[RMDB]
RNA sequence: GGGAACGACUCGAGUAGAGUCGAAAAAUAAACAGCCUUAGCGUAUGUUUUCAUCCCAACAUAUAAUACGCGAGGUAACAAUGACUGUACGCGUAUUAAUCAGUCAAUAACGCUAAGGUAAAAAAAACCAUUCAACUGUGUUCGCACAGUUGAAUGGAAAAGAAACAACAACAACAAC
Reactivity to 2A3 in 0.01 (KOAc 150mM, MgCl2 10mM, bicine 150mM(pH8.5), 24C), signal-to-noise 1, nucleotides 027 to 126: a000u200a020a080a040c070a030g030c040c000u000u000a000g040c000g020u050a060u070g050u050u010u050u110c110a120u030c050c030c000a000a000c040a020u200a000u000a040a000u000a010c010g070c000g000a060g140g070u030a020a000c010a040a130u050g060a020c020u030g020u070a060c010g000c010g000u000a010u010u020a030a040u120c030a000g070u020c090a000a180u100a100a000c000g020c000u010a000a000g000g020u000a040a000a000a000a000a020a050a000
About this RNA
An RNA of 177 nucleotides, treated with 2A3 and read out base by base. The reactions ran in a buffer of 150 mM KOAc, 10 mM MgCl2 and 150 mM bicine (pH 8.5), at 24 C. 2A3 adducts were read by reverse transcription with SuperScript II with manganese. It was measured as part of the RMDB library M2PK90.